[RMDB]
RNA sequence: GGGAACGACUCGAGUAGAGUCGAAAAGAUAUGGAAAGUCGAGCUCCUCAGGCCAAUUUCGGAAACGAAGAGCCUAGGGAGCUAAGACAGCUUUCCUAAGUCAAACGCUGUGCUUCGGCACAGCGAAGCACUAUAUAAUGUUCGCAUUAUAUAGUGCAAAAGAAACAACAACAACAAC
Reactivity to DMS in 0.01 (KOAc 150mM, MgCl2 10mM, bicine 150mM(pH8.5), 24C), signal-to-noise 5, nucleotides 027 to 126: g010a050u010a300u000g000g000a010a010a030g000u000c100g010a020g000c000u000c000c000u000c060a020g000g000c010c070a100a140u000u010u000c000g010g000a120a100a180c010g010a020a020g010a150g010c000c000u000a060g010g010g000a010g020c000u000a010a020g010a100c300a100g000c020u000u000u010c000c010u000a060a090g000u000c030a100a060a250c030g000c000u000g010u010g010c000u000u020c210g040g020c000a000c000a010g010c000g000a020a070
Reactivity to 2A3 in 0.01 (KOAc 150mM, MgCl2 10mM, bicine 150mM(pH8.5), 24C), signal-to-noise 4, nucleotides 027 to 126: g000a030u070a030u140g010g010a030a010a010g040u150c040g010a010g000c010u000c000c010u070c060a010g000g000c030c040a110a100u050u020u030c010g020g020a100a050a060c010g000a020a020g030a020g060c000c000u010a000g010g010g010a000g000c000u000a000a000g040a010c040a010g010c000u000u010u000c000c000u020a150a030g060u050c040a110a040a080c030g000c000u020g010u000g010c020u070u130c300g130g000c000a000c000a000g000c000g000a010a000